[RMDB]
Chemical mapping of a 177-nucleotide RNA with 2A3 and DMS. Reactivities are given for positions 27 through 126. Conditions: 150 mM KOAc, 10 mM MgCl2 and 150 mM bicine (pH 8.5), 24 C. It was measured as part of the RMDB libraries RFM100 and RFMREP.
RNA sequence: GGGAACGACUCGAGUAGAGUCGAAAACAGCGGUGAUCGAUGACUUGUGCAGUGGCCGAGGCGAUCGGAUUGUGAUGUCGCCUGAAAAGGCGGGACCCAACGUCGCGCCUUUCGCCAGAAGAUGGAAAUAUGUAGGUACGUUCGCGUACCUACAUAUAAAAGAAACAACAACAACAAC
Reactivity to 2A3 in 0.01 (KOAc 150mM, MgCl2 10mM, bicine 150mM(pH8.5), 24C), signal-to-noise 5, nucleotides 027 to 126: c020a020g050c050g050g020u050g040a080u060c060g020a060u100g050a080c020u070u080g020u070g060c070a060g020u030g050g020c010c020g030a060g000g020c020g050a050u060c020g030g050a110u130u130g080u060g050a050u030g040u090c000g010c000c020u020g020a040a040a000a010g000g000c000g000g020g010a020c030c040c030a050a050c080g010u010c020g000c000g030c040c030u010u010u010c030g000c010c000a040g030a110a030g050a070u170g010g030a080a130
Reactivity to DMS in 0.01 (KOAc 150mM, MgCl2 10mM, bicine 150mM(pH8.5), 24C), signal-to-noise 4, nucleotides 027 to 126: c080a100g000c060g010g020u010g010a070u000c030g010a080u010g000a080c050u010u020g000u000g030c070a100g010u000g000g020c040c070g010a080g030g020c020g000a040u010c060g000g000a110u020u020g040u010g000a080u000g000u000c000g010c010c010u010g020a060a030a070a020g000g000c000g000g000g000a080c010c070c170a130a130c110g010u000c020g000c020g000c010c000u000u000u000c060g010c030c010a080g010a090a090g010a080u010g010g000a070a120